[RMDB]
RNA sequence: GGGAACGACUCGAGUAGAGUCGAAAACUCCAGGGCCUUCCUUCUUCUGUGCUCCUGCCUCUCCUUGUCGGUGAACCCCCUGGCCUUGGGUUUCCUCCCAGGUCCGAAAUCAACCUCCAUGGUUUCCAAGCUAUCACCUUCGGGUGAUAGAAAAGAAACAACAACAACAAC
Reactivity to 2A3 in 0.01 (KOAc 150mM, MgCl2 10mM, bicine 150mM(pH8.5), 24C), signal-to-noise 9, nucleotides 027 to 129: c020u030c010c030a040g020g010g020c010c000u080u060c030c010u050u090c040u080u030c040u090g120u080g050c030u020c010c010u050g050c020c010u020c000u030c000c010u040u070g060u070c060g040g020u080g100a090a090c000c000c000c000c010u020g000g000c000c010u040u070g020g000g000u030u080u030c010c020u030c000c000c000a010g000g000u000c010c030g050a040a020a040u070c020a020a060c010c020u050c040c030a100u070g030g010u020u000u000c010c020a060a010g040
Reactivity to DMS in 0.01 (KOAc 150mM, MgCl2 10mM, bicine 150mM(pH8.5), 24C), signal-to-noise 7, nucleotides 027 to 129: c070u050c030c070a110g000g030g010c050c030u020u020c000c000u040u050c070u000u000c020u080g020u050g040c000u000c000c000u040g010c060c000u030c040u000c000c010u020u010g040u040c030g000g000u010g000a140a140c070c000c000c000c050u020g010g030c020c020u000u000g030g000g040u000u000u000c050c020u060c000c000c000a040g000g000u000c000c020g030a030a040a130u030c180a050a120c010c010u050c030c050a070u000g030g010u000u020u030c010c100a100a180g030